[RMDB]
RNA sequence: GGGAACGACUCGAGUAGAGUCGAAAACACGGCGAUUGUCACCGCAAGCGGCGUACUCGCGUCAACACCGUCGACGAUGCUGAUGUCUUUCUGCUCCGGUGAACCAGUUGGGUGAAGAUACCACUCAACCGCGCCGCGGUUAUGAUCGACCGUGGCGCAUAGCAGCCCGUUUCGACGGGCUGCUAUGAAAAGAAACAACAACAACAAC
Reactivity to DMS in 0.01 (KOAc 150mM, MgCl2 10mM, bicine 150mM(pH8.5), 24C), signal-to-noise 2, nucleotides 027 to 156: c000a050c030g040g000c010g030a140u000u000g010u000c010a060c060c000g010c060a120a190g020c060g000g030c030g020u000a040c070u000c110g040c030g000u000c010a020a180c070a010c030c000g060u000c170g030a080c050g000a050u000g000c010u000g000a090u010g010u000c040u000u000u010c050u030g030c020u030c070c030g030g000u000g010a090a050c020c010a010g020u000u010g020g010g010u010g040a160a100g000a300u000a130c120c010a030c000u000c010a000a010c000c020g000c030g060c010c000g010c010g030g030u000u010a050u000g000a120u000c000g030a030c020c000g010u000g010g050c020g030
Reactivity to 2A3 in 0.01 (KOAc 150mM, MgCl2 10mM, bicine 150mM(pH8.5), 24C), signal-to-noise 4, nucleotides 027 to 156: c010a020c010g020g020c010g030a040u030u060g020u050c050a010c010c000g040c120a160a050g090c030g040g010c030g010u060a060c060u070c090g060c110g040u030c020a050a040c020a020c050c010g100u160c100g060a100c080g050a050u180g000c040u090g030a140u100g140u110c140u050u130u020c050u080g010c010u000c020c010g000g000u050g040a050a030c030c010a020g010u020u010g010g000g020u030g020a110a030g100a150u260a120c100c020a000c010u010c000a010a020c050c030g000c000g010c000c010g000c000g000g000u000u020a050u110g070a060u020c020g130a170c000c000g010u000g000g000c010g010
Description: Chemical mapping of a 207-nucleotide RNA with DMS and 2A3. The 2A3 profile rests on 2,024 reads. As a SHAPE reagent, 2A3 marks flexible, mostly unpaired nucleotides at the ribose 2'-OH.